[RMDB]
Source information: Chemical mapping of a 207-nucleotide RNA with 2A3. Values cover nucleotides 27 to 156. It was measured as part of the RMDB library RSTRND. The reactions ran in a buffer of 150 mM KOAc, 10 mM MgCl2 and 150 mM bicine (pH 8.5), at 24 C. For 2A3 the reverse transcriptase was SuperScript II with manganese.

RNA sequence: GGGAACGACUCGAGUAGAGUCGAAAAAAACAGUAAACGCAAACGACGAACAGUUUGCUCUAGCAGCUUAAUCGCUCGCUAGAUCUCACACCAGCUUGCCGAUGGGCUGGGCAGGGUCAAACCUGCAGUGGGAUCAUCGCACAUCGGAUCGCUGCGUGCUGUCACAAAAGUUCGCUUUUGUGACAGCAAAAGAAACAACAACAACAAC
Reactivity to 2A3 in 0.01 (KOAc 150mM, MgCl2 10mM, bicine 150mM(pH8.5), 24C), signal-to-noise 2, nucleotides 027 to 156: a000a000a000c110a030g090u160a130a120a020c110g000c040a040a000a010c020g100a030c050g070a200a000c040a040g020u040u010u000g000c050u000c000u040a000g000c010a000g000c000u110u140a110a000u170c040g000c000u030c000g000c000u020a000g010a000u000c000u000c010a010c000a000c000c020a000g000c000u010u010g010c000c030g020a020u020g020g000g000c010u010g000g020g020c000a010g000g030g000u080c000a110a100a060c000c000u000g020c010a000g000u000g000g000g060a020u120c050a060u160c080g110c040a040c000a020u000c000g030g000a010u110c120g070c080u130g020c000g100u060